Structure probing data (2A3 and DMS) for a 177-nucleotide construct. For DMS the reverse transcriptase was MarathonRT.
RNA sequence: GGGAACGACUCGAGUAGAGUCGAAAAGGACUGCUCAGUAACACGUGGAUAACCUGCCCAAGGGUCUGGGAUAACCCCGGGAAACUGGGGAUAAUACCGGAUGGAUCACUAGUGCUGGAAUGCUUGGACCAUGAUCUCUUUUCGAAGAGAUCAUGGUAAAAGAAACAACAACAACAAC
Reactivity to 2A3 in 0.01 (KOAc 150mM, MgCl2 10mM, bicine 150mM(pH8.5), 24C), signal-to-noise 4, nucleotides 027 to 126: g080g020a060c040u070g000c010u020c060a030g030u080a120a020c020a000c090g040u040g010g030a030u040a070a080c000c000u010g000c010c010c020a010a030g050g000g000u010c020u040g010g010g010a020u050a070a070c010c000c000c000g000g000g000a030a050a010c010u010g000g010g000g020a010u070a040a020u060a030c010c000g000g020a010u050g050g070a030u050c010a010c050u050a020g050u020g050c020u030g030g080a100a050u130g040c020u020u040g050g010
Reactivity to DMS in 0.01 (KOAc 150mM, MgCl2 10mM, bicine 150mM(pH8.5), 24C), signal-to-noise 5, nucleotides 027 to 126: g010g000a120c090u020g010c060u010c030a050g010u020a040a060c060a070c150g050u030g000g000a070u000a040a150c040c010u000g010c030c010c020a130a070g010g010g010u010c010u010g010g010g010a080u000a110a160c020c000c000c000g000g000g000a070a080a080c000u010g000g000g000g000a020u020a060a090u010a090c000c010g020g010a020u010g020g000a080u010c010a050c060u000a130g010u000g020c020u010g000g000a070a070u030g000c030u010u000g010g030
The reactions ran in a buffer of 150 mM KOAc, 10 mM MgCl2 and 150 mM bicine (pH 8.5), at 24 C.